[RMDB]
RNA sequence: GGGAACGACUCGAGUAGAGUCGAAAAAUUAGAGGGUUAACUUCAAUUGAGAAAUGUACGAUUUUGACAGAUGCAUUACGGAAUGCUCAAUUUGGAAACCCAGGUUCUGUGUCAUGGAAUCUUGACACCGUCCUUUUAGUUUCGACUAAAAGGACGGAAAAGAAACAACAACAACAAC
Reactivity to 2A3 in 0.01 (KOAc 150mM, MgCl2 10mM, bicine 150mM(pH8.5), 24C), signal-to-noise 2, nucleotides 027 to 126: a000u250u180a080g040a140g100g030g010u090u110a070a030c010u050u040c050a000a000u010u030g010a030g010a020a170a070u080g020u050a020c090g100a300u070u000u140u200g210a170c140a050g080a220u200g010c010a000u030u030a040c030g050g030a100a000u100g000c050u000c000a060a030u090u080u060g030g000a000a110a000c000c020c020a000g080g010u030u000c000u000g050u020g020u030c040a010u060g100g130a110a080u100c030u000u010g010a020c010a010
Reactivity to DMS in 0.01 (KOAc 150mM, MgCl2 10mM, bicine 150mM(pH8.5), 24C), signal-to-noise 2, nucleotides 027 to 126: a120u000u020a150g000a140g010g010g010u000u000a030a140c090u010u000c100a010a020u010u010g000a020g010a110a100a050u000g000u000a080c050g000a150u030u000u000u000g030a150c140a180g010a110u000g020c000a030u010u000a060c070g020g000a100a100u010g000c010u010c000a020a000u010u010u010g010g010a060a030a010c010c000c000a110g020g000u000u000c050u000g010u000g000u000c050a020u000g000g020a110a090u000c050u010u000g000a030c060a090
Source: RMDB library OK2TST, as collected in RNAgym. Structure probing data (2A3 and DMS) for a 177-nucleotide construct. The DMS profile rests on 1,469 reads. In probing experiments dimethyl sulfate is read out at A N1 and C N3, which are open when not base-paired. The reactions ran in a buffer of 150 mM KOAc, 10 mM MgCl2 and 150 mM bicine (pH 8.5), at 24 C.